[RMDB]
RNA sequence: GGGAACGACUCGAGUAGAGUCGAAAACAGACGUUCAUCGUUCACGGCAAGCCUGACGAAGUAUACGUGAAGAUUAGCAACGCACGUCUUCAACCAUAAGCGUCUCCAGAUGCACACGACUGUAGCCCCAUUGGGAGGACUUCGGUCCUCCCAAUGGAAAAGAAACAACAACAACAAC
Reactivity to 2A3 in 0.01 (KOAc 150mM, MgCl2 10mM, bicine 150mM(pH8.5), 24C), signal-to-noise 6, nucleotides 027 to 126: c030a010g060a030c020g010u040u030c040a030u030c060g120u120u110c040a020c080g030g000c070a120a050g080c030c040u040g050a040c060g030a070a010g060u110a050u030a230c050g010u000g060a020a010g030a110u120u160a030g060c070a070a100c070g010c050a030c020g020u010c010u030u020c030a080a100c060c010a050u080a130a070g030c020g030u010c020u040c050c020a050g010a100u060g040c040a040c000a010c050g110a030c040u030g040u130a060g040c000c000
Reactivity to DMS in 0.01 (KOAc 150mM, MgCl2 10mM, bicine 150mM(pH8.5), 24C), signal-to-noise 2, nucleotides 027 to 126: c050a000g040a080c070g010u000u010c070a020u000c030g000u030u030c050a040c120g000g000c120a090a100g000c080c030u030g000a080c090g000a140a080g000u000a130u030a150c000g000u000g000a030a030g000a010u000u050a130g000c300a060a130c170g020c160a020c040g000u020c040u000u000c050a070a110c060c090a070u020a100a130g010c040g010u010c030u020c040c040a090g010a090u000g070c150a020c020a080c040g000a030c000u010g010u070a080g000c100c030